Structure probing data (2A3 and DMS) for a 177-nucleotide construct. For DMS, 1,243 sequencing reads were counted. For DMS the reverse transcriptase was MarathonRT.
RNA sequence: GGGAACGACUCGAGUAGAGUCGAAAAACGGCGAUCGCGAUAAUCCCAGCCUCUCAGCUGCGAUACAGCAGCCCUGUCUCCCUGAGCAGCCUGAAUUUCGACCCACUGACGGUAAGAGGGUGGAUACCAGAAGUUUGUGUUUCGACACAAACUUCUGAAAAGAAACAACAACAACAAC
Reactivity to 2A3 in 0.01 (KOAc 150mM, MgCl2 10mM, bicine 150mM(pH8.5), 24C), signal-to-noise 1, nucleotides 027 to 126: a000c040g030g010c020g080a070u090c040g010c030g100a050u050a120a120u140c050c000c000a010g000c000c010u080c010u030c030a040g030c010u000g020c000g120a190u060a150c030a030g010c010a000g000c020c000c030u040g000u010c010u030c060c020c000u030g040a010g020c040a020g000c010c030u010g010a030a020u060u030u050c060g050a070c010c000c030a070c090u070g060a030c050g050g000u030a030a020g060a060g020g000g030u040g060g070a050u060a070c030
Reactivity to DMS in 0.01 (KOAc 150mM, MgCl2 10mM, bicine 150mM(pH8.5), 24C), signal-to-noise 2, nucleotides 027 to 126: a120c030g020g000c090g000a040u010c080g010c050g010a070u010a090a140u010c070c010c000a160g020c050c010u000c050u000c110a130g020c010u000g020c020g030a160u000a110c150a040g010c040a060g020c030c060c010u000g020u000c070u000c000c020c020u000g030a090g030c060a040g020c010c010u020g000a060a130u000u000u000c030g000a100c060c020c020a150c060u000g000a070c040g010g000u000a050a050g000a080g020g020g000u000g020g020a070u000a090c180